The record gives the reactivity of an RNA of 177 nucleotides to DMS and 2A3.
2A3 adducts were read by reverse transcription with SuperScript II with manganese.
Values cover nucleotides 27 to 126.
The data come from the RNA Mapping Database (RMDB), libraries RFM100 and RFMREP.
The RNA was probed in 150 mM KOAc, 10 mM MgCl2 and 150 mM bicine (pH 8.5) at 24 C.
[RMDB]
RNA sequence: GGGAACGACUCGAGUAGAGUCGAAAAAGUCAGUGGUAAUACUGGUGUAAGCGUGUAGGGCGUGACCUAGGCAAAUCCGGGUCACAUUCAGCCUGAGACGUGAUGCGUAGCCGAUUGAGGCGAAUUCUAAAACGUGGAGAUUCGUCUCCACGUUUUAAAAAGAAACAACAACAACAAC
Reactivity to DMS in 0.01 (KOAc 150mM, MgCl2 10mM, bicine 150mM(pH8.5), 24C), signal-to-noise 7, nucleotides 027 to 126: a120g010u010c010a020g010u000g000g020u020a140a070u030a030c020u000g000g010u020g010u000a090a300g000c010g000u000g000u020a300g000g020g010c010g010u000g010a010c000c000u010a090g020g020c300a070a100a140u070c030c000g000g000g000u000c000a010c010a080u010u030c300a220g000c000c000u010g000a220g000a030c020g000u000g000a090u030g000c090g000u020a190g010c010c000g010a100u020u030g000a150g010g010c010g010a070a070u010u020c100
Reactivity to 2A3 in 0.01 (KOAc 150mM, MgCl2 10mM, bicine 150mM(pH8.5), 24C), signal-to-noise 4, nucleotides 027 to 126: a000g060u050c020a020g000u060g090g150u210a110a020u090a190c010u010g050g010u050g020u050a060a000g010c000g000u020g010u000a010g020g000g010c040g010u010g000a000c000c020u100a210g020g000c160a180a090a070u170c000c000g010g000g000u000c000a000c010a010u140u180c080a010g000c000c000u040g000a030g000a010c010g010u020g000a040u240g000c060g010u040a000g010c000c000g140a180u010u300g050a110g050g000c010g000a030a020u090u040c050